[RMDB]
RNA sequence: GGGAACGACUCGAGUAGAGUCGAAAAAGAUGUGGGUUGACCAUUAAUGGUCGGCUUAAGGUACGGGCUACGCCACCCGAGAGGGUGCAACUACCUACCGGGCGCACAACCUGAGAAGUAGUUGGUCAUGGUAGUACGGAACUGGCUUGUGGCAGUCGAACAAGUAUAACUUCGGUUAUACUUGUUCAAAAGAAACAACAACAACAAC
Reactivity to 2A3 in 0.01 (KOAc 150mM, MgCl2 10mM, bicine 150mM(pH8.5), 24C), signal-to-noise 5, nucleotides 027 to 156: a020g130a080u160g020u110g030g010g010u030u050g000a010c010c010a050u180u300a110a210u220g000g000u010c000g000g000c010u060u050a050a040g020g000u030a000c030g010g010g000c020u020a010c040g080c050c000a010c000c010c000g010a030g030a020g020g010g000u020g040c000a010a010c000u000a000c010c000u010a060c020c000g000g010g000c070g000c020a100c040a120a190c000c010u040g020a040g010a100a000g010u030a000g000u010u010g070g020u120c080a090u160g080g000u020a020g010u020a020c020g030g000a070a010c020u030g030g020c020u040u070g010u030g050g020c040a040g040u090c080
Reactivity to DMS in 0.01 (KOAc 150mM, MgCl2 10mM, bicine 150mM(pH8.5), 24C), signal-to-noise 2, nucleotides 027 to 156: a120g000a130u010g010u000g020g010g020u000u020g010a040c010c010a150u000u000a090a090u010g020g000u000c010g000g000c020u000u010a070a060g020g020u000a070c030g000g020g000c010u000a050c020g050c020c000a020c000c000c000g020a280g000a290g010g030g020u010g040c010a030a050c040u000a010c010c010u000a120c030c010g050g000g000c000g000c260a090c150a080a060c000c010u000g010a090g000a000a050g020u010a010g020u000u020g000g030u000c080a080u000g020g000u000a060g030u000a040c010g000g000a050a050c030u000g020g000c040u000u000g000u000g010g000c020a090g000u000c100
Structure probing data (2A3 and DMS) for a 207-nucleotide construct. The RNA was probed in 150 mM KOAc, 10 mM MgCl2 and 150 mM bicine (pH 8.5) at 24 C. It was measured as part of the RMDB library RSTRND.